[RMDB]
Structure probing data (2A3 and DMS) for a 207-nucleotide construct.
The 2A3 profile rests on 11,327 reads.
For DMS the reverse transcriptase was MarathonRT.
Source: RMDB library OK3TST, as collected in RNAgym.
RNA sequence: GGGAACGACUCGAGUAGAGUCGAAAACGACCGCCUGACGGGUCGGACAUAGCGUCAGGAUCAUCCGUGCCAGUCACCACGGUAAUCAUGUGGCUGAUGAUGGUUUUCCAUCUUAAUCUGACUGCGUCGUAGCAGUCUACAGUACUAUGACAUUAGACGAGUGAUAUUUAUUCGUAAAUAUCACUCGAAAAGAAACAACAACAACAAC
Reactivity to 2A3 in 0.01 (KOAc 150mM, MgCl2 10mM, bicine 150mM(pH8.5), 24C), signal-to-noise 9, nucleotides 027 to 156: c010g000a000c000c000g000c000c010u010g000a000c000g010g000g000u010c030g050g080a060c080a110u190a050g080c000g000u000c000a000g000g000a010u090c030a020u010c000c000g010u010g050c050c010a000g010u000c000a000c000c000a000c010g040g060u080a030a030u080c060a030u060g000u010g010g000c010u000g000a010u100g000a000u000g000g100u090u190u250u130c010c000a000u000c000u010u120a150a110u070c100u090g010a000c000u000g010c010g020u080c030g020u060a050g000c000a000g000u000c000u010a020c010a010g060u040a040c030u040a060u110g050a030c030a120u140u150a090g030a120
Reactivity to DMS in 0.01 (KOAc 150mM, MgCl2 10mM, bicine 150mM(pH8.5), 24C), signal-to-noise 3, nucleotides 027 to 156: c010g010a210c010c010g050c020c030u010g000a080c010g000g020g010u000c000g010g000a140c120a080u000a090g010c040g000u000c030a050g000g010a100u000c060a080u020c000c010g020u000g040c060c020a170g000u010c010a070c110c010a040c030g000g020u000a070a040u010c140a080u000g030u010g000g010c020u000g000a070u000g010a070u000g030g020u000u000u000u000c030c000a030u000c020u010u010a070a110u000c060u010g020a090c040u010g020c020g030u000c160g020u010a160g020c000a030g000u000c010u010a050c120a130g010u010a070c050u000a050u010g000a070c040a140u000u000a110g020a300